[RMDB]
RNA sequence: GGGAACGACUCGAGUAGAGUCGAAAAUGCGCUUGCUCAUGGCGAUAUUUCCUUUGGAUCUGGAAUCCAUGCCGUCCGUUCGCUCACCCAAACUCCGUCUACAUAGAUCAGGACUGACAGAGCAGUCGGGCUGAUCAGUAUUCGUACUGAUCAGCCCAAAAGAAACAACAACAACAAC
Reactivity to DMS in 0.01 (KOAc 150mM, MgCl2 10mM, bicine 150mM(pH8.5), 24C), signal-to-noise 2, nucleotides 027 to 126: u000g000c050g040c040u000u000g050c120u000c120a080u000g030g000c020g010a100u000a020u000u000u010c020c040u000u000u030g020g000a070u000c080u000g020g030a140a070u000c050c010a040u000g010c080c070g000u020c010c030g000u000u000c040g020c050u000c060a210c040c000c010a040a070a120c060u000c030c020g000u000c050u000a120c120a070u010a070g000a030u000c080a060g020g000a080c070u000g000a140c080a120g030a060g010c060a080g000u010c040
Reactivity to 2A3 in 0.01 (KOAc 150mM, MgCl2 10mM, bicine 150mM(pH8.5), 24C), signal-to-noise 1, nucleotides 027 to 126: u110g000c000g000c000u010u140g060c030u060c100a140u210g000g040c010g020a010u030a060u130u040u000c000c000u040u070u090g040g000a040u000c110u090g090g050a150a020u050c000c010a020u060g000c000c010g080u010c000c020g010u000u070c040g000c050u030c020a090c000c000c000a000a000a060c020u040c040c000g050u010c030u130a150c060a240u240a050g140a070u100c040a000g090g050a050c030u040g000a020c050a060g080a030g060c000a020g120u040c090